The record gives the reactivity of an RNA of 177 nucleotides to 2A3. The 2A3 profile rests on 855 reads. 2A3 adducts were read by reverse transcription with SuperScript II with manganese.
RNA sequence: GGGAACGACUCGAGUAGAGUCGAAAAUUAGUCAUCCAUCGUAUCCGAACGCUGAUUGGACAGGAGAAAUACACUGACUACCUAACAGUCAUGGACAGGUAUUCUGUGGAUGCUGACCUGCAACUGGGCUCCUCCACGAUUUCGAUCGUGGAGGAGCAAAAGAAACAACAACAACAAC
Reactivity to 2A3 in 0.01 (KOAc 150mM, MgCl2 10mM, bicine 150mM(pH8.5), 24C), signal-to-noise 2, nucleotides 027 to 126: u100u050a000g060u080c000a000u000c000c000a000u040c040g030u000a000u000c010c000g030a110a000c000g030c170u030g030a100u060u050g030g000a020c000a040g000g080a000g100a020a080a000u220a110c130a100c130u140g140a060c000u240a300c010c010u000a000a000c000a020g040u020c000a110u120g010g090a060c080a080g000g050u100a100u040u210c000u100g030u000g000g000a000u020g000c040u000g010a030c000c000u010g000c010a020a080c040u100g000g100